[RMDB]
RNA sequence: GGGAACGACUCGAGUAGAGUCGAAAAUAUCAAGACGCACUUGCUAUCAAAACCAGCUAGAGACACCAAAUACACUAUGCCUCAUGUGCUGAAGGCUAUUACAGUUGUAAACGAUGGAGGUGGGGAACCCAGCCGACAGUUUCGACUGUCGGCUGGGAAAAGAAACAACAACAACAAC
Reactivity to DMS in 0.01 (KOAc 150mM, MgCl2 10mM, bicine 150mM(pH8.5), 24C), signal-to-noise 1, nucleotides 027 to 126: u000a160u040c080a070a070g000a160c210g010c000a130c000u000u000g000c070u000a010u000c060a200a150a050a120c010c010a040g000c010u000a010g000a050g000a260c010a000c030c050a160a050a120u090a020c000a050c100u040a000u000g040c050c000u030c140a030u050g020u000g000c090u000g000a030a140g000g050c040u000a030u030u000a000c290a150g090u000u010g000u000a070a190a000c070g000a130u000g000g000a000g000g000u000g000g040g000g000a100a080
Reactivity to 2A3 in 0.01 (KOAc 150mM, MgCl2 10mM, bicine 150mM(pH8.5), 24C), signal-to-noise 1, nucleotides 027 to 126: u110a010u020c030a000a030g050a080c070g030c050a040c040u020u090g070c040u000a000u060c010a150a000a000a000c030c020a030g020c020u050a000g070a000g040a110c000a000c080c010a070a170a160u070a020c030a000c070u140a050u240g000c050c000u110c000a050u240g010u000g070c010u040g090a130a000g010g000c000u030a080u000u160a080c040a060g000u010u010g000u130a000a000a040c050g010a030u080g080g030a030g000g000u080g000g000g000g000a000a000